RNA sequence: GGGAACGACUCGAGUAGAGUCGAAAAUGUCACACAGUAGCGAGGGAUGCAAUUAAUUGCAUCUACACCAAGCUCAAGGCUUGGAUUUCGACUAGUGACGAGUCGUUCCCACUCGCUACGCCCACAAUGUCUACAACGUGUUCGCACGUUGUAGACAAAAAGAAACAACAACAACAAC
Reactivity to DMS in 0.01 (KOAc 150mM, MgCl2 10mM, bicine 150mM(pH8.5), 24C), signal-to-noise 1, nucleotides 027 to 126: u000g020u000c170a110c300a170c180a110g000u000a020g000c010g020a020g000g010g010a000u000g000c000a010a030u000u000a090a080u010u000g000c000a010u010c010u000a090c180a130c010c000a010a000g000c000u000c260a120a120g010g000c000u020u010g000g000a300u000u000u000c110g000a040c000u000a020g050u030g010a070c000g000a000g000u000c010g000u000u010c000c010c010a000c030u000c010g000c020u000a050c010g000c020c050c000a070c130a090a050
Chemical mapping of a 177-nucleotide RNA with DMS. Conditions: 150 mM KOAc, 10 mM MgCl2 and 150 mM bicine (pH 8.5), 24 C. Values are in units of 0.01, from 0 to 300, in steps of 10. The data come from the RNA Mapping Database (RMDB), library M2PK90. In probing experiments dimethyl sulfate is read out at A N1 and C N3, which are open when not base-paired.